The data come from the RNA Mapping Database (RMDB), library RFMREP. Chemical mapping of a 177-nucleotide RNA with DMS and 2A3. In probing experiments dimethyl sulfate is read out at A N1 and C N3, which are open when not base-paired. The RNA was probed in 150 mM KOAc, 10 mM MgCl2 and 150 mM bicine (pH 8.5) at 24 C. The 2A3 profile rests on 6,475 reads. Values cover nucleotides 27 to 126.
RNA sequence: GGGAACGACUCGAGUAGAGUCGAAAACUCCUCGGCUCCUGCAUUGUACACACUGUGCGGAAAACAUGGACAUGCACAGCGCAUACAAUGUGGAUGCUGUGGAGAAAUCAUAACGUUCGCGUUAUGACUUAGCCCUUAUGUUCGCAUAAGGGCUAAGAAAAGAAACAACAACAACAAC
Reactivity to DMS in 0.01 (KOAc 150mM, MgCl2 10mM, bicine 150mM(pH8.5), 24C), signal-to-noise 3, nucleotides 027 to 126: c000u000c010c000u000c010g020g000c000u000c030c010u000g030c000a000u000u000g000u000a020c160a180c040a060c000u000g020u010g000c000g000g000a080a130a090a080c150a130u010g010g040a110c090a240u030g000c000a010c000a010g030c010g020c110a290u000a000c020a000a000u000g010u000g010g000a030u010g010c000u000g000u000g000g010a010g020a040a040a080u000c010a000u000a000a000c000g010u000u010c210g020c010g010u000u000a000u000g000a060
Reactivity to 2A3 in 0.01 (KOAc 150mM, MgCl2 10mM, bicine 150mM(pH8.5), 24C), signal-to-noise 3, nucleotides 027 to 126: c000u000c020c000u010c010g010g000c010u050c020c020u040g000c000a010u000u010g000u020a010c040a010c000a000c040u010g000u000g030c030g030g040a060a080a040a020c090a150u220g120g070a020c030a060u150g000c000a000c000a000g000c020g000c010a000u010a030c000a000a010u010g000u020g000g010a020u130g000c000u000g010u010g000g010a010g010a090a050a020u060c000a000u000a010a000c010g010u030u060c210g010c000g070u020u000a000u000g000a000